[RMDB]
RNA sequence: GGGAACGACUCGAGUAGAGUCGAAAAUAUGUCGGUCUCAAUGCUGAAUAUUUUAAGUCUACUGUAGUACUCGGUACAUAGUAGUUGCUCAACGAAUAUUUGUUAAAUAAAUGAGUCUUAAGUCUGGAAGAACUUGCAAAGUUCUUUACCAGGUUGAGAUUUAAUUAUCAUUCGUGAUAAUUAAAUCAAAAGAAACAACAACAACAAC
Reactivity to 2A3 in 0.01 (KOAc 150mM, MgCl2 10mM, bicine 150mM(pH8.5), 24C), signal-to-noise 3, nucleotides 027 to 156: u170a050u060g130u040c040g010g040u030c030u010c030a100a150u200g030c040u070g010a070a010u010a030u020u060u050u100a090a070g030u000c000u000a010c000u010g070u060a120g020u020a060c050u080c300g110g020u030a000c000a010u050a000g010u010a000g000u020u110g010c020u010c110a060a050c030g040a050a010u010a090u060u130u070g040u100u170a110a120a080u100a060a080a070u110g010a030g050u000c010u060u100a100a020g020u010c010u000g000g020a010a010g010a010a000c000u020u170g080c140a190a140a020g000u000u000c000u000u000u020a110c000c000a000g020g000u030u020g030a030
Reactivity to DMS in 0.01 (KOAc 150mM, MgCl2 10mM, bicine 150mM(pH8.5), 24C), signal-to-noise 2, nucleotides 027 to 156: u000a090u020g020u000c020g030g010u000c200u000c140a100a140u010g000c020u000g000a070a050u000a000u000u010u000u000a060a070g020u000c030u000a030c020u000g000u010a090g030u000a020c030u000c070g000g000u000a060c070a140u000a080g040u000a080g020u000u000g010c020u000c050a060a120c050g000a040a060u010a040u080u000u010g000u000u000a070a060a120u010a050a030a160u000g000a100g000u010c080u020u000a050a150g030u000c000u000g010g020a070a010g020a020a010c030u000u000g030c300a140a100a160g030u000u000c010u010u000u010a130c010c010a010g020g020u000u000g000a170

An RNA of 207 nucleotides, treated with 2A3 and DMS and read out base by base. It was measured as part of the RMDB library OK3TST. The DMS profile rests on 2,530 reads. Conditions: 150 mM KOAc, 10 mM MgCl2 and 150 mM bicine (pH 8.5), 24 C. DMS adducts were read by reverse transcription with MarathonRT. Reactivities are rounded to 0.1 and cut off at 0 and 3. 2A3 is a SHAPE reagent: it acylates the 2'-hydroxyl of flexible nucleotides of all four kinds.